[RMDB]
RNA sequence: GGGAACGACUCGAGUAGAGUCGAAAAGAUAUGGAAACGACGACGGGGAGCAAUGCAUCGGAAACGAUGCCUUGCGAAGAACCAUCAGUUUCCUAAGUCAAAAGGUUGUGUCUUCGGACACAACCAAUCACUUACGAAGGUUCGCCUUCGUAAGUGAAAAAGAAACAACAACAACAAC
Reactivity to DMS in 0.01 (KOAc 150mM, MgCl2 10mM, bicine 150mM(pH8.5), 24C), signal-to-noise 3, nucleotides 027 to 126: g010a020u000a110u010g000g000a010a010a010c010g000a130c300g000a110c210g000g000g020g000a090g000c000a000a000u000g010c000a000u000c000g010g000a020a020a060c000g010a000u000g000c000c050u000u010g010c000g000a040a080g020a090a210c010c000a070u010c070a130g010u000u000u000c000c000u010a010a110g000u010c010a110a080a080a110g000g010u000u000g010u000g000u000c000u000u010c230g030g000a000c000a010c000a000a000c000c000a020a050
Reactivity to 2A3 in 0.01 (KOAc 150mM, MgCl2 10mM, bicine 150mM(pH8.5), 24C), signal-to-noise 2, nucleotides 027 to 126: g020a010u020a010u050g010g010a020a000a000c010g180a020c160g010a070c220g110g000g000g020a120g000c000a000a000u000g000c000a000u000c010g010g000a020a000a000c010g000a010u000g000c020c000u030u000g010c010g040a090a000g030a020a010c010c000a040u090c090a050g010u000u000u000c000c000u010a010a010g000u000c010a110a040a060a080g020g010u000u010g000u020g010u010c000u030u160c300g110g000a000c020a000c000a000a000c010c000a000a010

The record gives the reactivity of an RNA of 177 nucleotides to DMS and 2A3. The reactions ran in a buffer of 150 mM KOAc, 10 mM MgCl2 and 150 mM bicine (pH 8.5), at 24 C. For 2A3, 4,603 sequencing reads were counted. Reactivities are given for positions 27 through 126. DMS adducts were read by reverse transcription with MarathonRT. For 2A3 the reverse transcriptase was SuperScript II with manganese. High DMS reactivity at an A or C suggests that its Watson-Crick edge is free.